The record gives the reactivity of an RNA of 177 nucleotides to DMS.
The data come from the RNA Mapping Database (RMDB), library TTRINS.
The reactions ran in a buffer of 150 mM KOAc, 10 mM MgCl2 and 150 mM bicine (pH 8.5), at 24 C.

RNA sequence: GGGAACGACUCGAGUAGAGUCGAAAAGAUAUGGAUCUACGAGGCUCUGUGAUACUGACAUGCUUGGUUGUCGGAAACGACAGAGAGAGCAACAGCAGUAUCACAGAGCCUCGACGGAUCCUAAGUCGACUAACACGAGGUUCGCCUCGUGUUAGUCAAAAGAAACAACAACAACAAC
Reactivity to DMS in 0.01 (KOAc 150mM, MgCl2 10mM, bicine 150mM(pH8.5), 24C), signal-to-noise 1, nucleotides 027 to 126: g000a060u010a300u000g000g000a030u010c000u000a210c010g000a010g010g000c010u010c020u010g030u010g010a020u000a010c000u010g000a110c180a230u010g000c000u010u040g000g020u000u000g040u000c010g000g000a120a100a250c000g000a010c000a040g010a130g000a230g000a050g000c000a010a020c260a220g000c000a020g000u010a020u010c000a010c000a000g010a010g010c000c000u010c010g000a000c120g000g000a010u000c000c000u010a060a070g010u000c110